[RMDB]
RNA sequence: GGGAACGACUCGAGUAGAGUCGAAAAGGACGUCUAUGAAUGGUGAGGGAGCCAACCCUUGUAAUUGCAAAGCGUGGUUUUAAUACCACUAUGCAAGCCAAGUCUAAGUCGCUGAACAUCUAUAAUGAAAAUGGACUUUCUUCGGAAAGUCCAUUUUAAAAGAAACAACAACAACAAC
Reactivity to DMS in 0.01 (KOAc 150mM, MgCl2 10mM, bicine 150mM(pH8.5), 24C), signal-to-noise 4, nucleotides 027 to 126: g000g010a050c060g020u000c040u020a180u000g010a050a060u000g010g010u010g010a020g000g000g000a050g010c220c110a020a030c020c020c010u000u000g040u040a040a070u000u020g010c010a010a010a100g000c280g000u000g000g000u000u000u040u080a100a120u030a010c000c010a000c010u000a150u000g000c000a010a010g010c020c000a020a090g000u010c000u000a070a060g010u000c000g000c040u000g000a190a140c140a070u000c060u010a070u010a060a050u040g010
Reactivity to 2A3 in 0.01 (KOAc 150mM, MgCl2 10mM, bicine 150mM(pH8.5), 24C), signal-to-noise 2, nucleotides 027 to 126: g060g000a060c010g010u000c030u030a080u220g010a030a010u040g030g000u040g000a000g010g000g010a000g000c000c010a040a100c030c000c000u000u000g040u120a040a060u000u010g000c020a030a010a020g200c050g070u000g000g110u000u040u040u140a080a080u130a020c000c010a000c000u030a000u000g010c000a000a000g000c000c000a060a070g000u000c000u000a020a020g000u030c000g000c020u040g030a030a060c030a040u000c040u140a090u080a230a130u130g170